[RMDB]
RNA sequence: GGGAACGACUCGAGUAGAGUCGAAAACGAGGUGGCGUGAGCCACCUCGAAGAGGUACGUUCGCGUACCUCAACCGUAGCUCUUCGGAGCUACGGAGAUUCGAUCUUCGGAUCGAAUCAAGCUCCUGUCUACGGACAGGAGCAGAGACGGCGUGAGCCGUCUCAACAGCCGUACUUCGGUACGGCUGAACGGUAUUCUACGGAAUACCGACCAACCGGCUUCGGCCGGUUGGAAAACCUUCACCAAUUAGGUUCAAAUAAGUGGUUAGAUCAGGAUUCGUCCUGAUCAAAAGAAACAACAACAACAAC
Reactivity to 2A3 in 0.01 (KOAc 150mM, MgCl2 10mM, bicine 150mM(pH8.5), 24C), signal-to-noise 2, nucleotides 027 to 266: c030g000a010g010g010u010g010g040c050g060u160g040a040g020c010c000a010c000c000u010c010g000a000a030g000a000g020g000u010a000c020g010u020u130c290g000c000g090u000a000c000c000u010c000a000a000c000c000g000u000a000g000c000u010c020u070u090c300g160g000a010g000c000u010a010c000g000g000a020g000a010u000u000c000g010a000u000c020u030u130c260g210g000a000u000c000g000a000a000u000c010a000a030g000c000u000c000c010u000g000u000c000u000a060c300g060g000a000c000a010g020g000a000g000c000a000g000a000g000a000c000g000g000c030g040u050g050a010g000c000c000g020u000c000u000c000a000a000c000a000g000c000c000g000u000a000c000u060u100c200g130g010u000a000c010g000g000c010u000g010a070a010c000g000g000u000a000u000u000c000u040a050c240g070g010a000a000u000a000c000c000g000a010c010c010a000a000c000c000g000g000c020u060u110c120g100g020c000c000g030g000u000u000g000g010a010a010a010a000c000c000u040u050c030a010c020c000a000a030u060u020a030g020g020u180u270c050a080a060a090u100a070a050g110u010g010g030u060u100a040
This 307-nucleotide RNA was probed chemically with 2A3. It was measured as part of the RMDB library POS240. The RNA was probed in 150 mM KOAc, 10 mM MgCl2 and 150 mM bicine (pH 8.5) at 24 C. For 2A3 the reverse transcriptase was SuperScript II with manganese.